[RMDB]
RNA sequence: GGGAACGACUCGAGUAGAGUCGAAAAAGAUCAACCGCAAUUUGCGCUGUUUCAUACGACUGCCAGGGUUUACCAUCCACCAGUUCAGGUACGAACGGACGAAUAUGCUGACAGUUAUCGAGGAUCAACAACCAGCAUCGUUCGCGAUGCUGGUUGUAAAAGAAACAACAACAACAAC
Reactivity to DMS in 0.01 (KOAc 150mM, MgCl2 10mM, bicine 150mM(pH8.5), 24C), signal-to-noise 2, nucleotides 027 to 126: a080g000a130u000c090a100a200c100c040g010c030a140a050u030u000u000g030c140g010c040u000g000u000u000u000c010a020u000a080c090g010a080c040u000g040c040c060a140g000g000g000u010u000u010a070c160c060a080u000c040c010a090c170c040a140g020u030u000c090a140g020g030u000a060c050g000a050a020c000g000g010a030c070g000a090a060u000a040u000g000c060u000g010a050c120a060g000u000u000a080u000c020g010a090g010g000a070u000c040a090
Reactivity to 2A3 in 0.01 (KOAc 150mM, MgCl2 10mM, bicine 150mM(pH8.5), 24C), signal-to-noise 1, nucleotides 027 to 126: a000g050a050u020c020a040a000c040c020g110c080a040a160u040u030u150g060c080g000c030u020g080u080u040u090c040a020u110a100c100g000a000c060u010g060c060c020a090g000g000g050u030u070u100a080c000c020a040u040c030c020a030c060c010a010g050u090u100c030a040g000g170u100a040c050g050a060a000c010g050g020a030c000g020a000a020u150a120u140g040c000u040g020a050c020a060g000u100u020a100u100c040g060a060g020g000a050u070c030a020